[RMDB]
RNA sequence: GGGAACGACUCGAGUAGAGUCGAAAAUGUGCCGGUCAAGUACGCGAUUCACCCGGUCGCCGGCCGGAUGCCCGGGCAUAUGAACGUGCUGCUGGCCGAGGCCGAAGUCGACUACGACGCGAUGAAGAAACAGACAAACAUUCGUGUUUGUCUGUUUAAAAGAAACAACAACAACAAC
Reactivity to DMS in 0.01 (KOAc 150mM, MgCl2 10mM, bicine 150mM(pH8.5), 24C), signal-to-noise 7, nucleotides 027 to 126: u050g000u020g020c010c020g000g010u010c050a080a080g010u000a030c070g010c040g000a160u020u000c070a210c080c050c020g010g000u000c020g010c050c030g000g010c110c080g010g010a090u010g000c060c030c000g000g000g000c300a110u040a080u030g020a100a060c030g010u000g000c060u000g000c040u000g000g020c010c010g000a140g030g000c000c010g010a080a110g020u000c010g000a050c040u000a070c070g000a050c050g000c030g010a040u030g010a160a090g010
Reactivity to 2A3 in 0.01 (KOAc 150mM, MgCl2 10mM, bicine 150mM(pH8.5), 24C), signal-to-noise 6, nucleotides 027 to 126: u210g050u150g030c000c000g030g000u050c030a080a060g050u060a060c040g050c010g080a150u040u060c020a060c030c020c010g010g010u020c020g030c110c000g060g090c020c060g040g010a090u070g010c020c030c000g000g010g000c080a150u190a090u300g100a070a020c020g010u020g020c040u050g020c010u010g020g010c000c010g010a080g050g000c000c020g000a040a010g040u060c010g020a070c030u100a090c110g050a030c020g010c030g090a080u230g040a040a090g070
This 177-nucleotide RNA was probed chemically with DMS and 2A3. For 2A3, 5,680 sequencing reads were counted. For DMS, 17,208 sequencing reads were counted. Reactivities are given for positions 27 through 126. DMS adducts were read by reverse transcription with MarathonRT. For 2A3 the reverse transcriptase was SuperScript II with manganese. The reactions ran in a buffer of 150 mM KOAc, 10 mM MgCl2 and 150 mM bicine (pH 8.5), at 24 C.